[RMDB]
RNA sequence: GGGAACGACUCGAGUAGAGUCGAAAAAGAGGUGGGCUAGGUUGCCCGGUACCCCACCUGUGGUACGUGGUUCUUGGUUACAGGUUCCGCAAGGGUUUUACAGUGAUGUGAAAGACCUAGCCACAGGGGUGAAGAGACGAUUCGUCGUCUCUUCACCAAAAGAAACAACAACAACAAC
Reactivity to DMS in 0.01 (KOAc 150mM, MgCl2 10mM, bicine 150mM(pH8.5), 24C), signal-to-noise 2, nucleotides 027 to 126: a020g020a200g020g000u030g020g000g000c000u000a090g020g030u020u040g000c030c000c010g030g030u010a080c030c000c060c070a300c120c050u070g040u000g000g040u000a020c040g010u030g020g000u000u000c000u000u010g000g030u040u120a110c000a000g030g020u000u000c010c000g020c000a170a040g000g000g010u000u030u000u000a000c020a000g000u060g000a060u000g000u000g020a000a030a030g030a040c000c000u010a180g010c000c010a010c000a030g010g000
Reactivity to 2A3 in 0.01 (KOAc 150mM, MgCl2 10mM, bicine 150mM(pH8.5), 24C), signal-to-noise 3, nucleotides 027 to 126: a010g140a020g070g160u210g040g090g020c030u040a070g030g180u230u240g040c000c000c000g000g010u030a020c000c000c000c000a050c010c060u030g020u060g030g000u030a080c080g010u010g000g000u040u000c030u040u000g080g000u100u070a140c000a010g060g000u000u000c000c010g000c040a100a100g010g000g020u000u000u060u020a070c070a040g040u080g130a260u040g060u030g050a010a020a020g110a010c020c000u010a000g000c000c020a000c000a020g050g000
Structure probing data (DMS and 2A3) for a 177-nucleotide construct. The reactions ran in a buffer of 150 mM KOAc, 10 mM MgCl2 and 150 mM bicine (pH 8.5), at 24 C. Source: RMDB library OK1LIB, as collected in RNAgym.